[RMDB]
RNA sequence: GGGAACGACUCGAGUAGAGUCGAAAAUACCGUCUUCUCCCCGACGGUUUCAAUCCAUAGCUUCACGUUGUGUAGCGUAGGUGGAAGGUAUCGUGAGGUGUAUAAACACCACAUAGUCUCUUAGGGGUCAAGCUGAUAAACUUCGGUUUAUCAGCAAUAACAAUGAUACGUUCGCGUAUCAUUGUUAAAAAGAAACAACAACAACAAC
Reactivity to 2A3 in 0.01 (KOAc 150mM, MgCl2 10mM, bicine 150mM(pH8.5), 24C), signal-to-noise 7, nucleotides 027 to 156: u050a000c010c000g010u000c020u180u040c050u080c000c000c010c000g000a010c010g000g010u010u030u070c040a030a050u030c010c000a040u040a080g000c010u060u080c010a020c070g300u290u240g010u070g020u060a010g010c030g080u090a070g020g100u020g030g020a050a030g080g030u110a040u180c070g010u030g030a070g000g020u020g030u010a090u150a230a200a030c000a000c020c010a010c020a010u070a040g050u000c010u000c010u140u170a030g000g010g010g010u030c040a080a030g000c000u000g000a000u000a000a010a000c010u020u030c120g060g000u010u000u000a000u010c000a000g000c000a000a000
Reactivity to DMS in 0.01 (KOAc 150mM, MgCl2 10mM, bicine 150mM(pH8.5), 24C), signal-to-noise 4, nucleotides 027 to 156: u010a050c000c000g000u000c010u000u010c020u010c030c010c020c070g000a040c010g010g010u000u000u010c080a080a140u000c020c020a120u000a170g010c020u000u000c010a040c050g010u000u000g040u000g030u000a070g010c030g030u000a070g010g010u000g010g010a070a100g020g020u000a040u000c090g030u000g000a110g010g020u000g030u000a150u000a110a120a120c030a040c010c010a040c040a070u000a100g010u000c010u000c010u000u000a220g040g020g010g000u000c030a070a200g020c010u000g000a010u000a000a010a020c010u000u000c300g060g010u000u000u000a000u000c000a010g020c000a010a010